[RMDB]
RNA sequence: GGGAACGACUCGAGUAGAGUCGAAAAGAGUAACUGCAUUGAACGAAAAGUUCGAUGUAGUUACAAGACGCUACCCUUCCUGAGCUAAACAGAUAGAGAAGGGCGUGUCAAUGUUGGCGUGAGGGCUAAGGUGUGAUGAGUGCUUUAGCAUGACAUCUCUCUUAUGCUCAACCACGUACUCCAGAGACAAGACCUGUCUGUCAUGACACUAGGGCUUCGCACCUUCGUGUAAGCCCUUGUUGUUUUGUCUAUCACUCCUGAGCUAAAGUAACCUGUUCGCAGGUUACAAAAGAAACAACAACAACAAC
Reactivity to 2A3 in 0.01 (KOAc 150mM, MgCl2 10mM, bicine 150mM(pH8.5), 24C), signal-to-noise 9, nucleotides 027 to 266: g110a000g000u000a000a000c000u000g000c000a000u000u010g000a000a000c020g060a160a230a140a040g000u000u000c000g000a000u000g000u000a000g000u000u000a000c000a000a000g000a000c010g030c020u090a180c020c000c010u010u010c020c010u070g090a070g070c050u140a130a140a090c080a070g100a120u220a030g140a010g020a060a020g010g000g000c000g010u020g000u000c020a010a080u120g010u030u040g030g000c010g000u010g010a090g010g020g000c000u010a010a000g120g090u160g030u020g130a000u010g000a000g020u000g000c010u210u190u140a080g000c010a010u050g060a120c010a030u020c020u000c000u000c000u040u010a060u300g000c000u000c010a000a020c040c010a010c010g030u150a270c020u010c020c020a030g020a000g000a120c010a040a020g030a050c020c050u060g030u040c010u040g300u130c090a110u300g020a000c000a000c020u020a010g000g000g010c010u040u040c110g010c020a030c020c080u200u300c230g010u000g000u020a000a020g000c000c010c000u000u010g020u020u020g000u000u020u010u010g000u000c020u040a110u110c040a060c070u080c010c030u070g110a020g080c050u150a080a110a010
Reactivity to DMS in 0.01 (KOAc 150mM, MgCl2 10mM, bicine 150mM(pH8.5), 24C), signal-to-noise 9, nucleotides 027 to 266: g010a230g000u000a000a000c000u000g000c000a000u000u000g000a000a000c000g010a130a120a160a200g010u010u000c000g010a000u000g010u000a000g000u000u000a000c010a090a110g000a060c070g010c070u000a210c010c010c010u000u000c010c020u000g010a100g020c090u010a090a130a140c210a070g010a070u010a040g000a150g000a060a020g010g000g010c300g010u000g010u000c000a080a140u010g010u000u000g000g010c060g010u000g010a080g000g000g000c020u000a020a010g000g010u020g000u000g000a010u000g010a300g000u000g000c000u000u010u010a100g010c000a010u000g010a150c080a020u000c030u000c030u000c020u000u010a010u020g000c000u000c020a070a080c150c020a020c020g000u000a090c020u000c050c060a050g000a260g000a010c010a140a030g000a040c040c230u000g010u000c010u000g010u010c090a050u010g000a010c020a120c070u000a010g010g000g000c010u000u000c160g020c010a040c050c300u010u010c160g010u000g010u000a020a040g000c000c000c000u000u000g000u000u010g000u000u000u000u000g000u000c030u000a140u000c100a100c080u000c050c050u000g010a070g000c070u010a070a100a190